The data come from the RNA Mapping Database (RMDB), library OK3TST. Chemical mapping of a 207-nucleotide RNA with DMS and 2A3. Reactivities are given for positions 27 through 156. The reactions ran in a buffer of 150 mM KOAc, 10 mM MgCl2 and 150 mM bicine (pH 8.5), at 24 C. The DMS profile rests on 2,730 reads. For DMS the reverse transcriptase was MarathonRT.
RNA sequence: GGGAACGACUCGAGUAGAGUCGAAAAGCAACCGAUACGCCGGGAGCAAAACGCCUGAUAUCGUGCGCGAUAAGUGGGCGACAGAUCGCAGCCUGAUCGCAUACAUGGAAGAGCGUUAUGGCCCUUACGAUCUUGACGCAGCGGCAGACCAAAGCAAGUUUGUAUAAACCUUCGGGUUUAUACAAACAAAAGAAACAACAACAACAAC
Reactivity to DMS in 0.01 (KOAc 150mM, MgCl2 10mM, bicine 150mM(pH8.5), 24C), signal-to-noise 1, nucleotides 027 to 156: g030c000a280a140c030c000g000a120u010a070c020g010c020c000g020g030g010a210g010c040a080a050a050a300c030g020c010c000u060g000a150u000a040u010c050g010u000g050c120g010c030g000a050u000a010a090g020u000g000g000g000c000g010a170c090a110g000a080u000c020g000c020a200g020c040c020u000g010a090u000c030g010c020a160u010a050c070a130u000g010g020a120a070g010a130g010c010g000u010u020a110u000g000g000c020c000c000u010u000a040c010g010a030u000c010u000u010g010a180c020g020c000a080g000c020g000g020c010a030g000a300c040c010a040a040a100g010c090a050a250
Reactivity to 2A3 in 0.01 (KOAc 150mM, MgCl2 10mM, bicine 150mM(pH8.5), 24C), signal-to-noise 6, nucleotides 027 to 156: g030c010a030a080c030c020g040a070u070a150c060g000c030c010g030g070g040a170g030c020a060a090a000a040c010g000c000c010u010g020a040u010a010u060c030g010u020g040c150g000c000g070a000u010a130a080g100u120g010g020g000c010g010a010c030a030g040a020u050c010g020c050a000g030c000c000u050g010a050u080c010g000c010a050u130a270c050a050u140g100g070a100a060g050a050g060c000g010u030u040a050u080g040g000c000c020c040u020u060a030c020g010a010u010c000u030u110g040a040c070g010c000a020g070c020g030g000c010a020g050a050c020c050a030a080a010g120c060a110a060